Notes:
This 177-nucleotide RNA was probed chemically with DMS and 2A3. For DMS, 853 sequencing reads were counted. The reactions ran in a buffer of 150 mM KOAc, 10 mM MgCl2 and 150 mM bicine (pH 8.5), at 24 C. 2A3 adducts were read by reverse transcription with SuperScript II with manganese.
RNA sequence: GGGAACGACUCGAGUAGAGUCGAAAACAAAACCGCGAACUGUGUUCAGUCUUAAAGUACGAGUGACCGUUCACGUUUAGUCAUAAUGUACAAUGAAAGGCUUCCAGCUUACUAAGGCGUGUACGCGAUACUCCGGUCUGUUCGCAGACCGGAGUAUAAAAGAAACAACAACAACAAC
Reactivity to DMS in 0.01 (KOAc 150mM, MgCl2 10mM, bicine 150mM(pH8.5), 24C), signal-to-noise 2, nucleotides 027 to 126: c090a050a050a090a120c130c000g000c010g000a110a050c050u000g000u020g010u010u000c120a140g020u000c060u000u000a020a050a140g000u000a010c110g010a300g020u000g020a040c080c070g020u020u000c090a070c140g000u000u000u010a090g000u020c040a030u050a070a100u010g000u000a080c060a060a060u000g000a050a060a020g000g010c060u000u000c100c060a110g000c050u000u000a190c080u000a010a020g000g000c020g000u000g000u000a100c040g010c050g020
Reactivity to 2A3 in 0.01 (KOAc 150mM, MgCl2 10mM, bicine 150mM(pH8.5), 24C), signal-to-noise 1, nucleotides 027 to 126: c000a000a080a000a090c040c000g020c010g040a030a080c000u000g000u010g110u250u040c050a000g030u050c020u040u140a190a130a050g020u090a020c040g120a050g060u010g030a030c020c020g080u080u170c130a040c090g030u040u070u130a040g000u010c030a020u080a150a130u210g010u000a030c070a070a080u170g080a140a040a000g030g000c000u250u000c020c010a030g020c040u100u060a060c060u100a100a040g070g000c050g030u060g020u000a030c060g000c010g040
Values cover nucleotides 27 to 126. The data come from the RNA Mapping Database (RMDB), library OK2TRN.